Description:
The data come from the RNA Mapping Database (RMDB), library OK1LIB. Structure probing data (DMS and 2A3) for a 177-nucleotide construct. DMS adducts were read by reverse transcription with MarathonRT. For DMS, 5,221 sequencing reads were counted. The 2A3 profile rests on 3,497 reads.
[RMDB]
RNA sequence: GGGAACGACUCGAGUAGAGUCGAAAAUUUUUAAAGCGCUGCCAGAAACAGCCACGUUGCCCGAUAUGACAGCGCUUUGGUCAGAACAACAGGCUGAUAUCGAGCAGGGAAACAAAACGGUUGAUGCCACCUGUAUUCGAUUCGUCGAAUACAGGUGAAAAGAAACAACAACAACAAC
Reactivity to DMS in 0.01 (KOAc 150mM, MgCl2 10mM, bicine 150mM(pH8.5), 24C), signal-to-noise 4, nucleotides 027 to 126: u000u040u030u000u030a010a010a010g020c030g030c000u010g060c030c000a080g000a110a160a210c180a150g000c010c020a080c130g020u010u010g000c000c030c020g010a070u000a110u000g020a070c020a000g000c000g040c020u000u000u000g010g020u020c110a140g030a090a050c170a050a070c170a050g000g000c010u030g000a080u020a010u000c040g000a100g010c060a130g000g000g010a080a070a110c130a060a040a110a100c160g000g000u000u000g000a100u020g030c120
Reactivity to 2A3 in 0.01 (KOAc 150mM, MgCl2 10mM, bicine 150mM(pH8.5), 24C), signal-to-noise 4, nucleotides 027 to 126: u080u070u010u020u050a040a050a010g000c020g010c000u000g030c020c010a050g090a060a120a040c040a020g010c030c020a160c170g140u150u140g020c020c020c010g000a040u040a060u060g050a020c000a000g010c020g000c000u020u030u020g020g020u140c030a030g050a120a040c030a050a010c000a090g020g020c010u010g020a040u010a020u090c020g000a000g050c050a060g060g060g060a060a070a020c060a030a090a020a010c070g040g030u010u030g020a050u040g030c020